An RNA of 177 nucleotides, treated with DMS and 2A3 and read out base by base.
The reactions ran in a buffer of 150 mM KOAc, 10 mM MgCl2 and 150 mM bicine (pH 8.5), at 24 C.
Values cover nucleotides 27 to 126.
2A3 adducts were read by reverse transcription with SuperScript II with manganese.
[RMDB]
RNA sequence: GGGAACGACUCGAGUAGAGUCGAAAAGAUAUGGACGAGGUGAGAGCAACAGCUACCGGUCGGAAACGACCGAGUAGACAUGCUCUACCUCGUCCUAAGUCAAAAGGUAUGAGUUCGCUCAUACCAAGUCUUUGUUCAAGUUCGCUUGAACAAAGACAAAAGAAACAACAACAACAAC
Reactivity to DMS in 0.01 (KOAc 150mM, MgCl2 10mM, bicine 150mM(pH8.5), 24C), signal-to-noise 2, nucleotides 027 to 126: g000a020u000a110u000g000g000a010c000g020a010g010g010u000g000a050g030a000g020c000a150a110c300a200g000c000u000a010c010c000g010g010u000c000g020g000a010a020a060c010g000a020c000c000g000a070g000u000a000g020a030c060a300u020g020c000u000c000u000a010c000c000u000c010g010u000c000c010u000a030a050g020u000c000a130a090a130a130g000g000u000a010u000g010a030g020u010u010c300g000c010u010c000a020u010a010c000c000a070a060
Reactivity to 2A3 in 0.01 (KOAc 150mM, MgCl2 10mM, bicine 150mM(pH8.5), 24C), signal-to-noise 2, nucleotides 027 to 126: g020a000u020a020u060g010g010a000c000g000a010g060g010u120g130a140g020a000g060c140a130a120c080a260g000c000u000a000c000c000g010g040u010c000g010g020a020a040a030c000g000a000c000c000g000a020g000u010a000g000a000c000a020u160g000c000u010c000u010a010c000c000u010c000g000u000c000c010u000a040a000g010u000c000a020a010a000a170g000g010u000a010u010g000a010g080u050u260c300g070c160u000c010a000u010a000c000c010a010a000